[RMDB]
An RNA of 207 nucleotides, treated with DMS and 2A3 and read out base by base.
For DMS, 4,671 sequencing reads were counted.
Values cover nucleotides 27 to 156.
Values are in units of 0.01, from 0 to 300, in steps of 10.
It was measured as part of the RMDB library OK3TST.
RNA sequence: GGGAACGACUCGAGUAGAGUCGAAAAGACAGGUCAUACUCGACAGUUCGAGGUCGACGAACAAGAUGCAAAUCGGUUCCUCGGUCGCAAUCUUGGCAAUGAGGUCGAUGGGAACGCAGUUGGACUUGAUGGAGCAACACUUGAAUUGACUGGUGGCUCAACGAGAGUGAUUCGUCACUCUCGUUGAAAAAGAAACAACAACAACAAC
Reactivity to DMS in 0.01 (KOAc 150mM, MgCl2 10mM, bicine 150mM(pH8.5), 24C), signal-to-noise 3, nucleotides 027 to 156: g030a100c020a100g020g010u000c090a150u000a080c020u000c010g020a060c070a200g020u000u000c040g010a100g030g020u010c000g010a070c010g000a050a100c020a060a080g030a110u000g010c080a060a120a110u000c020g020g030u010u010c050c000u020c000g030g030u010c010g000c050a090a070u000c040u000u010g020g010c070a140a090u010g000a080g010g000u020c090g030a070u010g010g010g010a050a070c040g000c040a170g010u010u000g020g010a060c050u010u030g010a120u010g000g010a090g010c020a060a060c050a060c050u010u010g000a110a100u000u000g000a090c040u000g010g000u010g000g010c070
Reactivity to 2A3 in 0.01 (KOAc 150mM, MgCl2 10mM, bicine 150mM(pH8.5), 24C), signal-to-noise 4, nucleotides 027 to 156: g020a020c030a010g000g080u070c040a060u060a130c020u050c070g030a040c030a060g010u030u030c020g000a040g000g060u020c040g020a030c030g030a070a010c040a070a020g040a050u070g060c040a010a040a180u070c010g020g030u100u080c010c010u010c020g020g010u060c020g000c040a030a180u070c030u050u090g040g000c080a110a170u160g010a060g060g040u040c030g020a030u070g040g020g020a040a000c040g000c070a030g020u090u090g030g020a050c020u030u080g020a050u090g060g030a030g010c020a040a060c010a030c050u050u100g080a090a060u060u050g040a030c000u030g020g010u020g040g000c020